[RMDB]
RNA sequence: GGGAACGACUCGAGUAGAGUCGAAAAGCUCUCCCUAUGACGCUGGAGACAUCCUGGAAGGGGAAAGAGGAAGGUGGAAGAAAAAGGGGCGGGCCCCCCGAUCCGAGGGGUCCGACGGCCAAGUUUGCCUAUAUACACAGUUCGCUGUGUAUAUAGGAAAAGAAACAACAACAACAAC
Reactivity to DMS in 0.01 (KOAc 150mM, MgCl2 10mM, bicine 150mM(pH8.5), 24C), signal-to-noise 4, nucleotides 027 to 126: g010c140u000c040u010c020c000c050u000a120u010g010a060c170g020c110u000g010g020a070g010a050c070a080u000c050c050u000g000g010a070a060g000g000g000g020a030a040a050g000a090g000g000a060a040g010g020u010g000g000a080a060g000a040a050a060a080a120g010g000g000g030c020g000g010g010c010c000c000c000c000c010g010a090u020c160c070g010a030g010g000g010g010u010c000c010g020a030c100g000g010c030c050a070a120g010u010u000u000g010
Reactivity to 2A3 in 0.01 (KOAc 150mM, MgCl2 10mM, bicine 150mM(pH8.5), 24C), signal-to-noise 2, nucleotides 027 to 126: g030c020u020c020u010c040c020c010u100a230u190g090a030c050g040c100u060g020g020a040g010a020c000a060u060c000c040u020g040g050a050a000g020g030g000g020a050a110a060g050a040g020g020a050a020g020g030u050g020g040a040a040g010a010a140a020a000a020g030g010g000g010c000g020g010g010c000c000c000c000c000c000g040a070u070c120c020g000a020g010g020g000g000u000c020c000g010a020c020g000g000c010c020a020a030g010u030u090u140g050
The record gives the reactivity of an RNA of 177 nucleotides to DMS and 2A3.